[RMDB]
RNA sequence: GGGAACGACUCGAGUAGAGUCGAAAACGGCAGUGGCAUCGGUAUGUAACCUAAGGUAUCUGCGGGCGACGUUUAAGCGUCGUCGCAGAUACGCUACUUCUCUAGGUCGUGUAGCGCGCUGCUAUGGUCUACUCAUGGUCUUCGGGCCAUGGGUAGAAAAAGAAACAACAACAACAAC
Reactivity to 2A3 in 0.01 (KOAc 150mM, MgCl2 10mM, bicine 150mM(pH8.5), 24C), signal-to-noise 9, nucleotides 027 to 126: c010g010g000c000a000g000u030g060g020c020a060u070c040g030g020u070a030u070g090u040a030a020c000c000u010a050a010g060g000u000a000u000c000u000g000c010g040g050g020c000g000a000c000g010u020u060u210a150a020g040c000g000u000c000g000u000c000g000c000a000g000a000u000a000c000g000c000u010a030c010u170u080c020u000c020u040a010g000g020u020c010g010u020g010u040a020g040c020g000c000g000c010u000g000c000u010a040u050g030g020
Reactivity to DMS in 0.01 (KOAc 150mM, MgCl2 10mM, bicine 150mM(pH8.5), 24C), signal-to-noise 8, nucleotides 027 to 126: c040g000g000c010a010g020u000g020g030c070a100u040c070g000g000u000a030u010g000u010a100a030c010c010u010a050a060g010g000u000a000u000c000u000g000c000g020g010g010c000g010a000c000g010u000u040u060a120a170g000c000g010u000c000g020u000c000g010c000a000g000a000u000a000c000g010c090u010a060c130u020u020c020u010c100u010a030g000g010u000c040g010u010g010u010a040g010c030g000c000g010c000u000g010c010u000a060u020g020g010